RNA sequence: GGGAACGACUCGAGUAGAGUCGAAAAGAAUAUGUACGGACUCUGUAUGAUUUUCCUGGGAAUGAUGCCGAAGACCUGCCCUUUAAAAAGGGUGAGAUCCUAGUGAUAAUAGAGAAGCCUGAAGAACUAAUGUUAACACUUUCGAGUGUUAACAUUAAAAAGAAACAACAACAACAAC
Reactivity to DMS in 0.01 (KOAc 150mM, MgCl2 10mM, bicine 150mM(pH8.5), 24C), signal-to-noise 5, nucleotides 027 to 126: g000a120a060u010a060u000g020u000a080c080g010g020a110c090u010c040u010g020u000a040u010g000a100u010u000u010u010c060c010u020g020g010g010a080a060u000g010a070u000g020c040c030g000a100a160g000a050c050c020u010g000c010c000c000u000u000u000a040a090a140a080a080g010g000g020u000g010a040g000a050u000c010c030u010a160g000u000g010a070u000a080a080u000a070g000a080g000a090a090g020c020c030u010g020a070a080g010a080a100c130
Reactivity to 2A3 in 0.01 (KOAc 150mM, MgCl2 10mM, bicine 150mM(pH8.5), 24C), signal-to-noise 2, nucleotides 027 to 126: g010a000a100u130a060u280g040u070a040c020g000g150a080c020u020c030u120g050u090a100u090g070a070u090u070u050u050c010c010u030g020g000g000a020a120u120g060a050u120g080c030c030g050a040a010g000a050c040c000u020g070c000c000c020u020u070u050a090a160a060a020a010g000g000g010u010g030a050g000a000u000c000c000u000a030g000u040g160a060u040a160a000u030a030g060a000g010a120a020g050c000c060u090g080a060a030g030a040a020c050

An RNA of 177 nucleotides, treated with DMS and 2A3 and read out base by base. In probing experiments dimethyl sulfate is read out at A N1 and C N3, which are open when not base-paired. Values cover nucleotides 27 to 126.